[RMDB]
RNA sequence: GGGAACGACUCGAGUAGAGUCGAAAAGAAGCGGUACAAACUGAGCAGGCGAUGGAUCUUGUGUGAUCAGGUCCGUGGGGCCGGGCCGUUUUCGGCAGCGGAUGCAUGGCAUCCGCGGGACAGUAAACUAUGCCGUGUAGUUCGCUACACGGCAUAGAAAAGAAACAACAACAACAAC
Reactivity to DMS in 0.01 (KOAc 150mM, MgCl2 10mM, bicine 150mM(pH8.5), 24C), signal-to-noise 3, nucleotides 027 to 126: g000a090a090g000c040g030g040u020a060c180a040a090a110c070u020g000a120g010c070a170g000g010c020g000a050u020g010g000a020u000c010u010u030g030u010g010u040g000a110u020c050a030g020g010u000c010c010g030u020g000g010g020g020c030c030g000g000g000c010c020g010u020u000u020u000c060g000g020c040a120g030c000g010g010a030u000g000c010a220u020g010g010c000a020u010c010c000g000c010g000g000g000a080c090a040g010u040a050a090a160
Reactivity to 2A3 in 0.01 (KOAc 150mM, MgCl2 10mM, bicine 150mM(pH8.5), 24C), signal-to-noise 4, nucleotides 027 to 126: g080a030a000g020c010g000g010u110a100c110a100a180a050c100u070g040a040g040c030a060g040g050c030g090a090u160g040g000a060u040c050u170u150g020u010g050u110g090a080u200c020a020g000g020u000c000c020g040u050g010g020g090g010c010c000g000g030g000c000c010g000u040u010u050u120c040g030g000c010a010g010c010g000g000a000u000g000c160a280u200g170g000c000a000u000c000c000g000c010g000g010g000a010c010a000g000u020a000a000a000